[RMDB]
RNA sequence: GGGAACGACUCGAGUAGAGUCGAAAAUUCUUUUAGGCAUUGAUGCUAACACAGCAAAUAAAACGGAAAAGCCUGUGCCUUUGUGGAGGUUAUAUUCUGGUAGAGGAAGGUGUAAAGUACUAGGAUACACAUGUAGAUAUUCCGUGUCCAGGGUACGUGUAUACUUUAAUUUCGAUUAAAGUAUACAAAAAGAAACAACAACAACAAC
Reactivity to DMS in 0.01 (KOAc 150mM, MgCl2 10mM, bicine 150mM(pH8.5), 24C), signal-to-noise 3, nucleotides 027 to 156: u000u000c040u000u000u000u000a080g010g040c040a080u000u010g010a200u010g010c040u000a100a060c100a120c070a090g010c010a050a060a120u020a040a060a120a150c070g000g000a070a110a150a180g010c040c050u000g020u000g000c030c080u000u000u000g030u010g020g000a050g000g020u000u020a090u010a080u010u010c030u010g020g030u000a100g010a080g000g000a070a060g000g010u010g040u010a040a030a120g030u000a030c040u000a240g000g020a080u000a020c000a050c090a060u000g020u000a090g030a130u000a130u000u000c050c030g020u020g000u000c000c020a250g000g000g030u000a020c040g020
Reactivity to 2A3 in 0.01 (KOAc 150mM, MgCl2 10mM, bicine 150mM(pH8.5), 24C), signal-to-noise 3, nucleotides 027 to 156: u040u030c020u040u100u020u110a020g040g000c020a020u000u140g050a060u140g070c030u050a140a020c080a030c030a060g060c070a040a060a080u240a100a120a040a020c070g030g050a060a060a050a010g020c030c020u020g010u020g010c020c000u030u050u090g070u050g060g020a030g010g000u120u050a060u010a030u160u050c050u080g040g000u040a050g000a010g040g060a040a020g010g020u040g010u060a080a100a010g010u020a020c000u010a010g020g000a010u030a080c000a020c010a020u110g050u130a040g070a140u080a080u220u110c060c050g000u030g030u000c010c010a020g090g000g080u010a020c020g020
The record gives the reactivity of an RNA of 207 nucleotides to DMS and 2A3. For 2A3 the reverse transcriptase was SuperScript II with manganese. Values cover nucleotides 27 to 156. For DMS, 4,549 sequencing reads were counted. For DMS the reverse transcriptase was MarathonRT. The reactions ran in a buffer of 150 mM KOAc, 10 mM MgCl2 and 150 mM bicine (pH 8.5), at 24 C. It was measured as part of the RMDB library OK3TST. Reactivities are rounded to 0.1 and cut off at 0 and 3. DMS (dimethyl sulfate) methylates the pairing face of unpaired adenines and cytosines.